[RMDB]
RNA sequence: GGGAACGACUCGAGUAGAGUCGAAAACAGGCCAAAGUUGUUCCUCAGGUGGCUUUAGGCCUAAUGUAGGCAAUUGCGUGCCUAGAACAUUGCUAAUGUGCCCUGGGUUUCCUGCCUUCAUGCAAAUAUUCUACCUCCCCCGGCCUGGUGCAAAAUGACUUUUUGGUUAUUUCGAUAACCAAAAAGUAAAAGAAACAACAACAACAAC
Reactivity to 2A3 in 0.01 (KOAc 150mM, MgCl2 10mM, bicine 150mM(pH8.5), 24C), signal-to-noise 2, nucleotides 027 to 156: c010a010g000g000c000c000a070a040a050g020u030u020g010u080u050c020c030u090c040a040g000g030u000g030g000c000u090u050u070a110g010g030c010c010u040a040a020u120g040u070a000g000g000c000a060a080u110u170g040c090g040u040g000c030c000u000a010g040a020a010c010a060u080u240g080c080u170a180a020u050g050u070g060c020c000c010u030g030g020g030u040u100u040c000c020u040g010c010c000u040u090c030a040u120g070c070a000a080a110u120a080u110u120c060u080a090c020c040u040c020c010c000c000c020g010g010c000c010u020g030g000u030g010c000a020a050a020a090u080g020
Reactivity to DMS in 0.01 (KOAc 150mM, MgCl2 10mM, bicine 150mM(pH8.5), 24C), signal-to-noise 2, nucleotides 027 to 156: c040a040g000g040c020c030a110a110a160g040u000u000g040u000u000c020c020u000c040a100g040g050u000g010g010c040u030u000u000a090g020g010c010c020u010a040a040u000g010u010a040g030g010c010a060a080u000u010g010c080g020u010g020c000c010u010a040g040a070a040c040a040u010u010g020c060u010a120a110u000g010u000g020c000c010c030u000g000g000g010u000u000u000c050c020u000g010c030c020u000u000c030a070u000g040c070a080a110a190u000a090u000u000c040u000a090c010c040u000c010c000c020c010c030g010g010c020c040u000g010g030u000g010c030a040a040a080a140u000g000

This 207-nucleotide RNA was probed chemically with 2A3 and DMS. For 2A3 the reverse transcriptase was SuperScript II with manganese. The RNA was probed in 150 mM KOAc, 10 mM MgCl2 and 150 mM bicine (pH 8.5) at 24 C. Source: RMDB library OK3TST, as collected in RNAgym.